[RMDB]
An RNA of 177 nucleotides, treated with DMS and 2A3 and read out base by base. For DMS, 1,271 sequencing reads were counted. The RNA was probed in 150 mM KOAc, 10 mM MgCl2 and 150 mM bicine (pH 8.5) at 24 C. Reactivities are given for positions 27 through 126.
RNA sequence: GGGAACGACUCGAGUAGAGUCGAAAAGCAUUUCAAGUUUGACGGGUGAAACUGUAGAAAAGGGCAAAGAAAUUACGAUAGCGUUAACGACAAAUGAAAACGCAAUAUUUGACGGAAUCACGCCAAAUCAAAUGGUUUGGUUCGCCAAACCAUUUGAAAAAGAAACAACAACAACAAC
Reactivity to DMS in 0.01 (KOAc 150mM, MgCl2 10mM, bicine 150mM(pH8.5), 24C), signal-to-noise 2, nucleotides 027 to 126: g050c070a070u000u030u010c050a100a120g000u000u000u010g020a100c080g000g010g030u020g010a040a070a120c080u000g020u000a080g000a010a020a060a070g010g000g000c090a050a060a070g000a050a070a070u000u010a070c210g000a090u030a110g010c040g020u000u000a050a210c050g000a120c120a040a040a120u000g000a040a070a060a030c110g020c040a060a040u000a060u000u000u000g000a090c060g000g010a080a100u020c080a070c020g040c020c060a020a030a110
Reactivity to 2A3 in 0.01 (KOAc 150mM, MgCl2 10mM, bicine 150mM(pH8.5), 24C), signal-to-noise 1, nucleotides 027 to 126: g050c040a050u070u020u080c050a090a000g050u050u050u090g040a050c020g040g000g000u000g000a060a080a010c050u050g020u040a020g050a030a070a000a010g050g000g020c050a220a000a000g090a010a190a020u110u130a060c080g130a100u140a080g000c000g000u000u000a040a000c050g130a040c140a060a100a010u160g060a020a090a080a000c020g000c090a000a040u130a080u120u010u000g040a010c020g000g020a080a070u070c000a000c040g000c020c040a030a060a050